[RMDB]
RNA sequence: GGGAACGACUCGAGUAGAGUCGAAAAGCUACUUGUGUGAGAAUACUUUUAGUACAAGCGAGUACACGCAGUAUACUGCCACUUGUGUGAGAAUACUUUUAGUACAAGCGAGUACACGCAGUAUACUGCACUCUCAAUAAUUCGUUAUUGAGAGUGCAAAAGAAACAACAACAACAAC
Reactivity to DMS in 0.01 (KOAc 150mM, MgCl2 10mM, bicine 150mM(pH8.5), 24C), signal-to-noise 5, nucleotides 027 to 126: g000c050u020a010c020u000u010g010u010g000u040g000a120g000a090a060u010a050c090u000u020u020u010a090g030u010a050c040a110a220g020c100g000a110g020u010a080c100a090c150g010c040a000g010u000a000u000a000c010u000g010c000c150a060c030u000u000g000u010g000u010g020a100g000a130a130u000a020c010u010u020u000u020a110g010u000a020c040a080a300g000c060g000a040g010u010a070c130a120c300g000c010a000g000u000a000u000a010c010u000
Reactivity to 2A3 in 0.01 (KOAc 150mM, MgCl2 10mM, bicine 150mM(pH8.5), 24C), signal-to-noise 9, nucleotides 027 to 126: g040c020u030a030c010u060u040g010u010g020u060g070a090g120a140a080u120a160c010u080u110u080u170a070g020u040a020c030a070a060g030c050g130a010g030u040a020c080a020c070g030c010a000g000u000a010u000a010c000u010g020c020c000a030c010u040u020g010u010g020u050g120a130g130a120a060u060a080c020u050u140u170u240a080g010u020a020c040a060a020g030c010g040a020g030u080a070c030a000c050g000c000a000g000u000a000u000a010c010u010